[RMDB]
RNA sequence: GGGAACGACUCGAGUAGAGUCGAAAAUCACACCUUACACUCCGCAUCGCUCGUACGUCAGGCCGACUCCGCUGCGGAUGAGCGGCGCAGCGUGCGCUUCGUCGAGGUCCCUCUACCGUCCGCCGCAACGUCCUCAGCAGUUCGCUGCUGAGGACGUAAAAGAAACAACAACAACAAC
Reactivity to 2A3 in 0.01 (KOAc 150mM, MgCl2 10mM, bicine 150mM(pH8.5), 24C), signal-to-noise 2, nucleotides 027 to 126: u080c000a040c000a020c010c000u210u160a110c070a000c070u000c040c000g060c010a130u100c030g060c060u000c020g010u100a100c000g020u050c080a060g030g080c000c010g040a030c030u020c030c020g000c060u070g090c070g030g000a000u030g030a030g080c000g000g010c010g000c030a000g040c020g090u130g030c000g000c000u020u020c000g050u000c000g020a080g000g060u000c040c000c000u030c040u070a030c000c030g000u000c010c000g000c030c030g000c020a050
Record summary:
An RNA of 177 nucleotides, treated with 2A3 and read out base by base. The 2A3 profile rests on 1,109 reads. Source: RMDB library OK1LIB, as collected in RNAgym. The reactions ran in a buffer of 150 mM KOAc, 10 mM MgCl2 and 150 mM bicine (pH 8.5), at 24 C.